[RMDB]
RNA sequence: GGGAACGACUCGAGUAGAGUCGAAAAAAGGCUUUCGAGCCUUAAUCUUCCUAAGUCGUGAUGCUCAGGAAGUGUGUGGGAGCUAUCGGAAACGAUAGCGAAGAACACACAUGGAAGAGCCGCUCACGAUAUGGACGUAAGGAGCAUUCGUGCUCAAUUAUAUGGUGAAGUUCGCUUCACCAUAUAAAAAAGAAACAACAACAACAAC
Reactivity to 2A3 in 0.01 (KOAc 150mM, MgCl2 10mM, bicine 150mM(pH8.5), 24C), signal-to-noise 5, nucleotides 027 to 156: a000a000g070g000c090u120u100u160c260g060a010g000c000c000u000u020a030a050u040c020u050u060c010c000u040a140a060g020u000c000g010u010g000a030u230g000c010u000c020a060g190g120a070a020g010u000g010u000g000u000g010g010g000a020g020c000u020a000u000c000g050g020a120a040a050c010g000a000u000a000g000c000g010a060a000g010a000a000c000a000c000a000c000a010u020g000g040a070a090g000a000g010c000c000g000c000u010c000a000c010g000a000u000a030u060g020g010a020c070g070u110a120a110g160g000a000g000c020a030u080u130c240g140u090g000c010u010c000a010a020
Reactivity to DMS in 0.01 (KOAc 150mM, MgCl2 10mM, bicine 150mM(pH8.5), 24C), signal-to-noise 4, nucleotides 027 to 156: a040a010g020g030c010u000u000u010c220g030a040g020c000c010u010u010a020a090u010c100u000u000c000c010u000a100a240g020u010c010g000u000g040a050u010g020c000u010c000a060g000g000a280a300g000u010g030u000g010u000g000g030g000a300g010c000u000a000u000c000g020g000a220a120a300c010g020a020u000a000g000c000g000a030a100g000a120a170c000a010c000a020c010a040u000g010g020a300a250g000a040g010c010c030g010c080u000c010a020c000g010a060u000a200u000g000g010a070c070g000u000a100a110g000g000a040g010c010a110u000u000c180g010u000g000c020u000c000a050a120

The record gives the reactivity of an RNA of 207 nucleotides to 2A3 and DMS. Reactivities are given for positions 27 through 156. The data come from the RNA Mapping Database (RMDB), library RNAMAK. For 2A3, 5,625 sequencing reads were counted.